[RMDB]
RNA sequence: GGGAACGACUCGAGUAGAGUCGAAAACAGAUUUCACGCUCUAAGGUGGUUUCACAAUCGGGGCCAUCCAUUUGCCAUGAAGCGUGUACUGGCCGGAUGAUGAUUGCUUAUUUCUGACCUCACCUUGGAUUACGACAUCAUUCGUGAUGUCGUAAUCAAAAGAAACAACAACAACAAC
Reactivity to 2A3 in 0.01 (KOAc 150mM, MgCl2 10mM, bicine 150mM(pH8.5), 24C), signal-to-noise 9, nucleotides 027 to 126: c020a010g070a050u050u130u110c020a010c010g020c020u020c040u090a080a070g020g000u040g020g050u030u100u110c100a120c070a160a180u170c170g000g010g050g000c000c010a020u050c020c000a090u060u100u230g080c050c040a080u120g070a070a010g010c020g010u010g010u020a050c030u020g030g000c010c030g030g010a060u080g010a010u050g040a050u110u060g020c050u070u090a090u090u170u000c040u020g050a060c000c010u010c030a040c030c000u010u070g080
Reactivity to DMS in 0.01 (KOAc 150mM, MgCl2 10mM, bicine 150mM(pH8.5), 24C), signal-to-noise 2, nucleotides 027 to 126: c000a040g000a060u010u020u000c040a030c060g010c040u000c060u010a100a090g000g000u000g020g010u000u000u010c010a090c150a070a090u010c180g010g000g000g030c000c030a000u010c000c000a070u000u020u020g020c170c140a130u030g000a060a010g020c030g000u010g040u000a070c060u020g000g000c020c000g000g000a080u000g000a060u000g010a080u020u000g000c190u000u010a100u010u030u010c040u000g000a130c020c010u020c050a050c050c040u000u000g030